[RMDB]
RNA sequence: GGGAACGACUCGAGUAGAGUCGAAAAGACUACGAAGAAGGCUGUAUCUUACUUAGAGAGCUGUAUCGCAGAAACCAAUAUUGGUACGAAAUACUUGGCAAGUAAGGAAUACUUAGCUCGUAGUGAAGAUAUUGUGUUAUUUCGAUAGUACAAUAUCAAAAGAAACAACAACAACAAC
Reactivity to 2A3 in 0.01 (KOAc 150mM, MgCl2 10mM, bicine 150mM(pH8.5), 24C), signal-to-noise 9, nucleotides 027 to 126: g010a000c000u000a000c010g050a040a150g120a110a040g140g020c030u010g020u020a030u020c000u000u000a000c000u030u080a050g030a010g020a020g210c060u060g030u050a040u040c030g000c100a040g150a200a080a030c020c000a080a050u200a170u260u160g010g000u030a020c020g050a050a050a030u080a030c030u070u080g080g000c060a010a000g000u010a000a010g020g050a080a020u020a020c030u120u160a050g010c010u010c030g000u000a000g010u010g030a070a010
Reactivity to DMS in 0.01 (KOAc 150mM, MgCl2 10mM, bicine 150mM(pH8.5), 24C), signal-to-noise 9, nucleotides 027 to 126: g020a050c010u000a000c010g010a110a060g010a110a130g010g010c060u010g010u010a040u010c000u000u000a010c010u010u000a100g010a300g000a060g010c150u010g010u000a050u010c060g020c300a110g000a120a100a080c020c030a030a160u040a130u030u020g010g020u010a120c060g000a070a070a040u020a040c040u020u010g010g020c140a020a020g010u000a010a020g000g010a090a050u000a020c010u020u030a060g000c030u000c020g010u010a010g010u000g010a080a060